[RMDB]
RNA sequence: GGGAACGACUCGAGUAGAGUCGAAAACGGGAAGCUGAGGUUUUUCCUAUGUCUGAACAAUGACGCCAUCGUUUUCUGGGUCUUCGAAGCAGUUGCAAAGAAAUGCCCAGAUGGAGGACAGAGGGCCGACGUAAAUAGAGUUCGCUCUAUUUACGUCAAAAGAAACAACAACAACAAC
Reactivity to 2A3 in 0.01 (KOAc 150mM, MgCl2 10mM, bicine 150mM(pH8.5), 24C), signal-to-noise 6, nucleotides 027 to 126: c020g000g030g050a040a010g020c040u050g040a120g080g060u040u040u000u110u070c010c010u050a080u080g030u000c020u030g050a080a030c040a090a170u140g030a020c040g050c080c030a090u100c070g020u070u050u030u040c010u000g010g000g000u000c010u010u020c030g030a100a010g000c030a140g140u300u300g070c010a070a050a000g010a010a030a030u090g010c000c000c000a000g000a000u010g020g020a020g020g020a000c010a020g040a050g020g020g010c040c070
Reactivity to DMS in 0.01 (KOAc 150mM, MgCl2 10mM, bicine 150mM(pH8.5), 24C), signal-to-noise 8, nucleotides 027 to 126: c070g000g000g010a060a090g010c040u000g010a100g010g010u000u000u000u000u000c010c000u000a070u000g010u000c020u010g000a150a120c150a070a070u010g010a080c090g010c110c090a090u000c040g000u000u000u000u000c020u000g010g010g010u000c260u000u000c010g000a160a230g010c010a240g010u010u010g020c020a030a100a250g000a010a040a050u000g010c020c000c000a020g010a020u010g010g010a160g000g000a040c040a040g000a070g000g000g020c170c150